[RMDB]
RNA sequence: GGGAACGACUCGAGUAGAGUCGAAAAGGGGUCGUCGUUUGUCAGGGAAAGAAGGCAUCUUGGAUUUACACCUGAAGCCUCCACGGGUGUUGUCAGAUGCCCUUUCCCUUGGAUUUAACGACGACGGAGGCACCCAAAAGACAUCUUCGGAUGUCAAACCUAGGUAUUUCUUCGGAAAUACCUAGGUAAAAGAAACAACAACAACAAC
Reactivity to DMS in 0.01 (KOAc 150mM, MgCl2 10mM, bicine 150mM(pH8.5), 24C), signal-to-noise 1, nucleotides 027 to 156: g020g000g050g050u010c030g070u000c000g000u000u000u010g040u000c030a130g010g040g000a000a000a030g010a070a140g030g020c000a020u010c030u000u000g050g000a100u020u030u000a020c010a040c050c020u000g000a100a210g000c030c050u010c050c030a300c100g000g020g020u000g000u000u000g000u020c020a060g010a060u010g020c000c010c010u010u010u010c000c000c000u000u000g000g000a000u000u000u000a020a020c000g000a060c040g010a030c010g000g020a110g000g000c060a150c010c020c000a080a020a030a160g080a040c010a020u000c000u010u000c300g050g010a040u000g010u000c000a020a100
Reactivity to 2A3 in 0.01 (KOAc 150mM, MgCl2 10mM, bicine 150mM(pH8.5), 24C), signal-to-noise 3, nucleotides 027 to 156: g090g010g010g030u010c010g000u000c000g000u000u000u030g050u030c050a050g030g020g010a000a000a050g100a080a210g010g000c010a000u010c050u140u210g110g020a080u260u200u240a020c010a010c040c010u040g080a140a060g080c060c000u050c070c010a030c010g010g010g000u020g010u000u010g020u020c050a030g000a020u000g000c010c000c000u000u000u020c000c000c000u000u060g010g000a010u150u120u270a000a000c000g000a000c000g010a000c000g000g000a000g000g010c050a050c010c000c000a040a080a010a060g020a000c000a010u010c000u050u100c280g110g000a010u010g000u010c000a010a070